This 207-nucleotide RNA was probed chemically with DMS and 2A3.
[RMDB]
RNA sequence: GGGAACGACUCGAGUAGAGUCGAAAAACUGCAUCUACGGAUGCAGAACUACGUUCAUCCAAUUUAUUUGGACGCAUGAAAUGAGAAUAGGGAACGGGAUUCUCAUACGAAGGCUACGGCCUGCGAAAAAACUCCUUAUGCUUCGGCAUAAGGAGAAUCGUCUAUACACGUUCGCGUGUAUAGACGAAAAAGAAACAACAACAACAAC
Reactivity to DMS in 0.01 (KOAc 150mM, MgCl2 10mM, bicine 150mM(pH8.5), 24C), signal-to-noise 2, nucleotides 027 to 156: a130c010u000g000c020a010u000c000u010a090c190g060g010a030u000g020c000a000g020a050a060c000u000a010c000g000u000u010c000a080u010c080c110a110a150u000u000u000a140u030u020u020g000g010a020c000g000c020a030u010g000a090a050a160u000g000a100g010a080a070u000a130g010g040g010a130a060c070g000g000g010a300u020u000c000u000c020a120u000a090c010g000a020a020g010g000c000u010a150c190g060g000c000c000u000g000c010g000a000a050a100a060a080a020c000u000c000c000u010u010a020u010g000c000u000u000c300g030g020c000a010u000a010a000g030g030a010g020a010a000
Reactivity to 2A3 in 0.01 (KOAc 150mM, MgCl2 10mM, bicine 150mM(pH8.5), 24C), signal-to-noise 4, nucleotides 027 to 156: a000c000u000g000c010a000u000c000u010a040c240g140g000a000u000g010c000a000g000a020a000c050u090a030c020g000u010u020c010a010u020c000c010a040a020u090u220u170a190u070u070u150g000g000a000c010g020c060a050u140g100a120a160a030u010g000a020g000a010a000u010a010g070g000g000a020a010c000g000g000g000a000u010u000c000u000c000a000u010a040c010g060a020a010g000g010c000u020a010c180g110g000c020c010u010g060c030g070a050a020a010a030a050a060c000u020c000c000u000u000a000u000g010c010u030u090c200g110g000c010a000u000a000a000g000g000a000g000a000a020

The RNA was probed in 150 mM KOAc, 10 mM MgCl2 and 150 mM bicine (pH 8.5) at 24 C.
The DMS profile rests on 3,082 reads.